[RMDB]
RNA sequence: GGGAACGACUCGAGUAGAGUCGAAAAUUCUGGAUUACUUAGUUAUGGCCUUUGCAAAGGCAGGGGUAUUUGUUUUGAUGCAAACCUCAAUCCCUCCCCUUCUUUGAAUGGUGUGCCCCACCCCGCGGCAUUUAGUCUCAUUCGUGAGACUAAAUGCAAAAGAAACAACAACAACAAC
Reactivity to DMS in 0.01 (KOAc 150mM, MgCl2 10mM, bicine 150mM(pH8.5), 24C), signal-to-noise 2, nucleotides 027 to 126: u060u000c040u000g000g040a070u030u020a050c070u030u000a110g030u020u020a070u010g000g030c040c000u020u000u040g010c120a120a080a030g010g010c080a080g010g000g000g020u010a000u000u000u010g010u000u000u000u000g010a120u030g020c050a000a060a050c070c010u040c040a070a060u000c000c030c030u000c070c050c000c010u000u000c010u000u060u020g020a090a010u010g000g040u000g010u010g010c030c020c000c030a240c050c010c010c040g030c150g000
Reactivity to 2A3 in 0.01 (KOAc 150mM, MgCl2 10mM, bicine 150mM(pH8.5), 24C), signal-to-noise 4, nucleotides 027 to 126: u040u020c010u050g070g020a080u030u080a080c030u090u150a060g120u070u080a090u160g110g000c000c010u030u080u180g080c080a130a100a000g080g000c020a010g010g020g000g000u060a170u090u070u000g120u030u090u080u180g090a090u240g010c000a000a020a040c020c010u010c020a000a080u040c010c000c000u020c010c000c000c000u020u030c000u010u060u100g060a060a040u030g050g010u040g030u080g050c000c000c000c000a050c000c060c000c010g060c010g040
This 177-nucleotide RNA was probed chemically with DMS and 2A3. For DMS the reverse transcriptase was MarathonRT. For DMS, 2,728 sequencing reads were counted. The reactions ran in a buffer of 150 mM KOAc, 10 mM MgCl2 and 150 mM bicine (pH 8.5), at 24 C.